About this RNA
Chemical mapping of a 177-nucleotide RNA with 2A3 and DMS. Source: RMDB library OK2TST, as collected in RNAgym. The 2A3 profile rests on 1,442 reads. For DMS the reverse transcriptase was MarathonRT.

RNA sequence: GGGAACGACUCGAGUAGAGUCGAAAAUGGUAGCGCUUGGAUACGCAGCGACCCGGCUGAUUGGGUGGAUCGUUCGCAAGUUUGUGAAGCCCAAACCCCAGGACUAUGAAAGAGUCACGAAGGUGCCGUUUAAAGUGGCAUUCGUGCCACUUUAAACAAAAGAAACAACAACAACAAC
Reactivity to 2A3 in 0.01 (KOAc 150mM, MgCl2 10mM, bicine 150mM(pH8.5), 24C), signal-to-noise 1, nucleotides 027 to 126: u140g080g020u060a030g020c050g020c100u040u020g090g030a010u070a190c110g000c060a030g000c000g000a080c000c000c000g030g000c020u040g030a170u040u010g010g010g020u000g000g000a000u010c030g030u050u000c030g000c050a020a080g030u030u090u110g010u050g000a000a000g010c020c020c020a000a000a060c050c020c020c000a030g000g020a010c010u050a040u190g090a080a030a040g070a020g020u030c020a010c150g040a030a020g080g000u020g010c030c010
Reactivity to DMS in 0.01 (KOAc 150mM, MgCl2 10mM, bicine 150mM(pH8.5), 24C), signal-to-noise 3, nucleotides 027 to 126: u020g020g010u010a060g010c030g000c030u000u020g010g000a150u010a070c120g020c020a060g010c030g010a090c020c030c050g010g000c020u000g020a100u010u010g000g020g010u010g010g000a100u010c020g000u000u010c050g000c300a060a170g000u000u000u000g010u000g000a300a230g000c020c010c010a030a050a110c030c050c000c010a120g000g010a040c030u000a060u020g000a080a070a110g000a020g000u000c010a060c050g020a110a130g010g010u000g000c090c140